[RMDB]
RNA sequence: GGGAACGACUCGAGUAGAGUCGAAAAGAAUUGGUAUGUAAGCUACUUCUUCCAGUAGCUGCGUCAUAACAUCAAGGUUAUGCAUACUGAGCCGAAGCUCAGCUUCGGUCGUCCAAGGAAGACCAAAUACAGCUCAGCCCGUUCGCGGGCUGAGCAAGAUCCAGUUUAUCUUCGGAUAAACUGGAUCAAAAGAAACAACAACAACAAC
Reactivity to 2A3 in 0.01 (KOAc 150mM, MgCl2 10mM, bicine 150mM(pH8.5), 24C), signal-to-noise 1, nucleotides 027 to 156: g140a030a070u050u050g020g000u010a010u000g000u010a000a010g010c000u000a000c010u090u090c000u030u020c010c010a000g000u000a000g000c000u000g000c000g000u000c000a010u000a020a000c010a030u270c180a120a040g300g000u000u000a000u000g010c000a000u010a000c000u010g010a000g020c010c010g000a000a000g010c030u030c300a010g000c000u000u000c000g000g000u000c020g040u000c010c040a030a000g010g000a000a000g000a020c020c110a020a040a040u240a160c040a000g000c000u000c020a020g000c000c010c000g000u080u090c150g020c000g130g000g000c000u000g000a000g020c000a000a000

Source: RMDB library M2RFPK, as collected in RNAgym. Structure probing data (2A3) for a 207-nucleotide construct. For 2A3, 899 sequencing reads were counted. As a SHAPE reagent, 2A3 marks flexible, mostly unpaired nucleotides at the ribose 2'-OH.